An RNA of 207 nucleotides, treated with 2A3 and read out base by base.
The RNA was probed in 150 mM KOAc, 10 mM MgCl2 and 150 mM bicine (pH 8.5) at 24 C.
The 2A3 profile rests on 815 reads.
Values cover nucleotides 27 to 156.
Source: RMDB library OK3TST, as collected in RNAgym.

[RMDB]
RNA sequence: GGGAACGACUCGAGUAGAGUCGAAAAACUAUCUUUCUGGACUGGUGCUCAGACAGCCAUCACCAUCAGGCAGCAUAAUUGCAUCCCUGAAAAGUAAGGGACUGGAAGGGACUGUGCUCUUCCAUUCUCAAAUUCUAAUCUGUGUCCAGCUUUGUGGCUGUAGCGCUAGUUUCGACUAGCGCUACAGAAAAGAAACAACAACAACAAC
Reactivity to 2A3 in 0.01 (KOAc 150mM, MgCl2 10mM, bicine 150mM(pH8.5), 24C), signal-to-noise 2, nucleotides 027 to 156: a010c100u080a140u090c020u020u100u000c010u020g000g040a040c020u020g010g010u070g040c050u060c040a030g000a130c010a020g100c020c030a120u130c010a020c010c020a030u050c000a020g000g040c020a010g030c020a090u120a180a130u280u110g060c030a090u060c030c010c000u000g070a100a070a000a030g070u090a020a140g010g020g000a000c000u000g020g010a000a000g010g000g030a030c070u140g120u140g170c000u020c000u020u010c010c000a010u000u000c000u010c010a080a130a030u110u040c020u060a030a030u020c070u010g070u000g050u070c010c000a040g060c130u010u220u040g050u070g050g040